[RMDB]
RNA sequence: GGGAACGACUCGAGUAGAGUCGAAAACUUAUCCGGUUUUAACGCUGUUUUAUUGGCGCAAAGGUUUACGGAUAAACAACUAAUAAUUAAACCUUUUGUGUGCGAAACGUCGUUGUUUAACGUACUCACUGCCCCCAGGGAUUCGUCCCUGGGGGAAGAUGACGAUUCUCUUCGGAGAAUCGUCAUCAAAAGAAACAACAACAACAAC
Reactivity to 2A3 in 0.01 (KOAc 150mM, MgCl2 10mM, bicine 150mM(pH8.5), 24C), signal-to-noise 1, nucleotides 027 to 156: c000u040u020a000u000c000c010g050g050u010u070u000u040a050a010c000g000c050u040g120u160u190u140u180a120u170u260g000g000c000g000c010a000a000a020g000g000u010u030u030a000c010g000g000a000u000a020a210a010c060a020a030c040u220a090a090u130a220a060u180u120a010a030a010c000c000u060u050u110u130g000u000g000u010g030c060g040a060a060a050c060g080u170c060g000u010u020g020u000u000u030a060a010c000g000u000a000c030u000c080a050c040u040g010c000c000c000c020c000a000g000g000g020a020u030u000c120g030u020c050c010c000u000g000g000g000g000g000a000a000
Conditions: 150 mM KOAc, 10 mM MgCl2 and 150 mM bicine (pH 8.5), 24 C. This 207-nucleotide RNA was probed chemically with 2A3.